Source: RMDB library OK1LIB, as collected in RNAgym. Structure probing data (DMS and 2A3) for a 177-nucleotide construct. The reactions ran in a buffer of 150 mM KOAc, 10 mM MgCl2 and 150 mM bicine (pH 8.5), at 24 C. For 2A3 the reverse transcriptase was SuperScript II with manganese. Reactivities are rounded to 0.1 and cut off at 0 and 3.
[RMDB]
RNA sequence: GGGAACGACUCGAGUAGAGUCGAAAAUGGAAGGCAAUCACUUAUAUCCAGUUUUACAAGUGCUUUGAUUCUGACCCUGGGGAGGAUUUGAGCAUUUUUAUGAAAGAUAAAGCAAUCAGCUGUCCUACCUACGCUAGGGGUUCGCCCCUAGCGUAGGAAAAGAAACAACAACAACAAC
Reactivity to DMS in 0.01 (KOAc 150mM, MgCl2 10mM, bicine 150mM(pH8.5), 24C), signal-to-noise 1, nucleotides 027 to 126: u020g000g010a040a020g050g010c050a060a000u030c140a040c000u080u000a080u000a080u020c100c080a210g000u060u020u010u000a010c110a020a040g000u000g000c040u000u040u000g030a080u010u010c000u000g020a260c070c020c070u000g000g110g010g000a230g000g000a000u000u000u070g030a010g000c010a000u000u000u020u030u000a000u030g000a070a050a130g010a060u000a010a010a050g000c160a020a040u040c070a080g000c000u040g000u000c030c000u000a010
Reactivity to 2A3 in 0.01 (KOAc 150mM, MgCl2 10mM, bicine 150mM(pH8.5), 24C), signal-to-noise 4, nucleotides 027 to 126: u150g030g010a030a010g040g030c030a030a060u060c040a040c070u060u100a220u000a020u300c030c050a130g030u030u050u070u080a060c060a000a030g000u010g020c010u000u070u070g030a020u050u000c010u060g250a300c010c020c120u240g090g050g000g030a010g000g010a000u040u010u030g010a010g000c000a000u000u050u000u040u080a110u100g060a160a050a010g020a030u030a040a050a000g030c080a050a070u100c020a110g020c020u070g010u180c000c000u030a070